Conditions: 150 mM KOAc, 10 mM MgCl2 and 150 mM bicine (pH 8.5), 24 C. The record gives the reactivity of an RNA of 177 nucleotides to DMS and 2A3. 2A3 adducts were read by reverse transcription with SuperScript II with manganese. For DMS, 1,415 sequencing reads were counted. DMS (dimethyl sulfate) methylates the pairing face of unpaired adenines and cytosines.
RNA sequence: GGGAACGACUCGAGUAGAGUCGAAAAGAUAUGGACCAUACAGACAUGCCUACAUAUCGGAAACGAUAUUGAGGCAACAGCUGUACUGGUCCUAAGUCAAACGGUGUGCGCUUCGGCGCACACCGAAGAUCAUUCUCUUCUUCGGAAGAGAAUGAUCAAAAGAAACAACAACAACAAC
Reactivity to DMS in 0.01 (KOAc 150mM, MgCl2 10mM, bicine 150mM(pH8.5), 24C), signal-to-noise 2, nucleotides 027 to 126: g000a000u000a010u000g010g000a020c000c000a040u000a010c000a000g000a090c140a300u000g010c000c000u020a150c300a040u020a030u000c010g000g020a010a010a010c000g030a010u000a020u000u000g000a060g030g000c000a110a040c300a070g000c000u000g000u000a000c300u000g000g000u010c010c000u000a000a040g010u010c010a130a160a240c060g020g010u000g040u000g000c040g070c000u000u000c270g080g010c000g000c000a020c020a000c000c010g000a010a020
Reactivity to 2A3 in 0.01 (KOAc 150mM, MgCl2 10mM, bicine 150mM(pH8.5), 24C), signal-to-noise 2, nucleotides 027 to 126: g000a000u010a000u040g020g010a020c000c000a010u010a000c000a000g060a020c120a300u300g000c000c040u080a190c040a010u020a010u000c010g000g030a000a040a000c000g000a000u000a000u040u240g050a000g000g000c010a030a000c000a000g000c020u000g000u030a010c300u030g000g000u000c000c010u000a020a010g010u010c000a170a060a040c010g000g000u010g030u020g020c000g000c050u070u220c300g120g000c000g020c040a010c000a000c000c010g000a010a000